This 177-nucleotide RNA was probed chemically with 2A3 and DMS. For DMS the reverse transcriptase was MarathonRT. 2A3 is a SHAPE reagent: it acylates the 2'-hydroxyl of flexible nucleotides of all four kinds.
[RMDB]
RNA sequence: GGGAACGACUCGAGUAGAGUCGAAAAAACGCCAAUGUACAUUAAUAUGAAAACGCGUAUCGCCAUGUUUUUAUAUGAUAAAUCAGAGGUGUCGAACGUAGUAGGGCAACAAAAAUUUGCGGUUAAAACCACACACUCAUUUCGAUGAGUGUGUGGUAAAAGAAACAACAACAACAAC
Reactivity to 2A3 in 0.01 (KOAc 150mM, MgCl2 10mM, bicine 150mM(pH8.5), 24C), signal-to-noise 3, nucleotides 027 to 126: a000a000c020g030c020c000a050a020u140g060u120a020c000a100u030u200a250a000u080a030u110g120a050a030a000a030c030g070c050g020u120a220u190c040g040c050c000a060u100g110u030u000u000u110u010a070u020a050u040g070a060u050a030a090a010u030c000a010g050a080g150g000u080g020u240c140g060a000a000c040g000u000a000g060u030a000g080g170g140c030a060a000c030a100a000a000a050a090u090u150u180g000c000g000g070u210u250a010a000a010
Reactivity to DMS in 0.01 (KOAc 150mM, MgCl2 10mM, bicine 150mM(pH8.5), 24C), signal-to-noise 2, nucleotides 027 to 126: a070a000c000g050c020c000a030a180u000g010u050a140c140a050u000u000a130a020u000a020u000g000a020a020a000a030c000g000c060g000u010a090u070c060g020c140c290a100u000g000u000u000u000u020u000a000u010a000u000g000a040u000a040a140a050u040c020a060g020a230g010g010u010g030u010c030g000a130a080c050g010u050a020g000u020a010g000g000g000c150a000a000c090a030a040a040a020a090u050u000u000g000c180g030g010u000u020a040a060a030
For 2A3 the reverse transcriptase was SuperScript II with manganese.